Structure probing data (DMS and 2A3) for a 177-nucleotide construct. The 2A3 profile rests on 4,673 reads. For DMS, 3,875 sequencing reads were counted. The data come from the RNA Mapping Database (RMDB), library OK1LIB.
[RMDB]
RNA sequence: GGGAACGACUCGAGUAGAGUCGAAAAGAAAGUGCUUAAACCGUGUGGACGCGAAUGGCUAUAACCACCGAAACCUGAGGAAACAGGAAGCCACAACGCAAGCCAUGUGGUUAGCACACGGAAGAAACAUGAGGUCCAUAUUCGUAUGGACCUCAUGAAAAGAAACAACAACAACAAC
Reactivity to DMS in 0.01 (KOAc 150mM, MgCl2 10mM, bicine 150mM(pH8.5), 24C), signal-to-noise 3, nucleotides 027 to 126: g010a080a080a130g010u020g000c000u030u000a110a030a000c000c010g000u020g000u000g000g010a080c160g020c020g000a160a190u010g000g000c000u000a050u010a090a110c080c200a110c170c160g010a070a090a100c080c040u000g000a180g000g000a070a150a210c050a080g000g000a100a050g030c010c010a110c090a080a150c030g000c010a070a040g040c010c020a020u010g000u000g000g020u000u030a010g000c030a010c030a100c140g000g010a120a080g000a160a040a080
Reactivity to 2A3 in 0.01 (KOAc 150mM, MgCl2 10mM, bicine 150mM(pH8.5), 24C), signal-to-noise 5, nucleotides 027 to 126: g110a020a050a010g000u030g010c020u130u130a110a020a030c010c010g000u010g010u010g020g030a010c020g000c000g020a060a040u030g000g000c000u020a030u100a210a100c060c030a080c060c080g080a160a070a050c010c000u070g040a080g080g220a090a130a040c010a020g010g010a040a000g000c020c000a010c040a080a100c010g000c010a110a090g080c010c010a020u040g010u010g000g000u000u030a000g000c000a000c000a000c010g090g040a090a110g030a050a080a010